[RMDB]
RNA sequence: GGGAACGACUCGAGUAGAGUCGAAAAGUGCAGAGUGAAAUUCAUAGGUGCGGCGCCAAUGUGGCGUAACGACCCGGUACACCGCGCAGUCGCGCUGUAAACGUUCUGUGUUGGCGUUCGGGCCUCAGACCGAUAAUCGUUUCGACGAUUAUCGGUCAAAAGAAACAACAACAACAAC
Reactivity to 2A3 in 0.01 (KOAc 150mM, MgCl2 10mM, bicine 150mM(pH8.5), 24C), signal-to-noise 1, nucleotides 027 to 126: g140u090g040c010a010g050a050g090u030g050a140a080a080u130u010c030a010u100a170g070g000u030g000c010g000g000c000g000c000c000a000a020u290g040u220g070g090c060g000u010a000a000c000g070a070c010c010c010g000g000u060a050c030a000c010c020g030c000g000c060a010g020u200c260g000c000g130c160u110g080u140a000a060a000c010g000u130u000c030u060g060u020g030u010u260g010g010c020g010u080u020c010g120g010g030c000c000u000c000a010
Reactivity to DMS in 0.01 (KOAc 150mM, MgCl2 10mM, bicine 150mM(pH8.5), 24C), signal-to-noise 2, nucleotides 027 to 126: g040u000g000c030a120g030a140g000u010g000a120a100a100u050u050c130a030u050a070g000g000u000g010c020g000g010c020g000c000c040a020a020u010g000u000g000g010c150g010u000a060a050c050g000a120c030c000c000g000g020u010a090c070a040c050c090g000c030g030c140a080g000u010c040g000c000g030c140u000g010u010a080a060a100c020g010u010u030c010u000g010u010g000u020u000g000g000c000g000u010u030c030g020g000g020c080c010u000c130a100
Description
The record gives the reactivity of an RNA of 177 nucleotides to 2A3 and DMS. DMS adducts were read by reverse transcription with MarathonRT. For DMS, 2,769 sequencing reads were counted. The 2A3 profile rests on 457 reads.